Conditions: 150 mM KOAc, 10 mM MgCl2 and 150 mM bicine (pH 8.5), 24 C.
The record gives the reactivity of an RNA of 207 nucleotides to DMS and 2A3.
The DMS profile rests on 4,047 reads.
For 2A3 the reverse transcriptase was SuperScript II with manganese.
The data come from the RNA Mapping Database (RMDB), library OK3TST.
DMS adducts were read by reverse transcription with MarathonRT.
RNA sequence: GGGAACGACUCGAGUAGAGUCGAAAAGGCGAUCGAGAGGCCCUCUCAUUAAUGCGGAGGUGUCACGCUGACAGAAUGAUAUUAGAUGUCCGCUUCCGGUUGCAUCGCGGCGAUGAUUACAUAGGACAUCGAUUACCCAUUGGCUUCGGGGAAGCAACCCUACUAAAUAUUUCGAUAUUUAGUAGGGAAAAGAAACAACAACAACAAC
Reactivity to DMS in 0.01 (KOAc 150mM, MgCl2 10mM, bicine 150mM(pH8.5), 24C), signal-to-noise 2, nucleotides 027 to 156: g010g040c010g030a090u010c060g000a070g030a130g000g000c010c000c000u000c040u000c030a160u000u000a090a130u000g010c090g000g010a120g010g030u010g040u010c030a110c040g020c070u030g030a220c060a140g000a120a090u020g000a090u000a080u000u000a100g010a070u000g010u000c000c020g010c100u000u000c040c020g000g030u010u010g020c030a100u000c070g020c060g000g070c050g040a100u000g000a130u000u010a040c070a120u010a120g020g010a060c010a040u000c010g010a110u010u000a050c010c010c030a270u000u010g020g020c140u000u010c080g040g000g000g010a080a080g020c040a090a160
Reactivity to 2A3 in 0.01 (KOAc 150mM, MgCl2 10mM, bicine 150mM(pH8.5), 24C), signal-to-noise 2, nucleotides 027 to 156: g020g000c010g010a040u050c080g030a070g010a040g160g050c000c000c010u000c000u010c010a120u100u300a250a100u200g020c080g020g010a010g000g010u170g020u070c020a010c060g010c010u020g020a010c010a070g190a120a100u100g090a070u060a110u210u200a080g010a050u010g010u020c000c000g010c010u090u020c040c000g060g000u020u060g030c030a060u060c060g030c040g120g000c050g060a060u020g020a020u090u150a110c090a090u160a080g000g010a000c000a020u000c010g000a010u000u080a030c020c010c010a040u030u080g070g000c030u030u010c080g080g000g000g000a010a000g010c010a010a040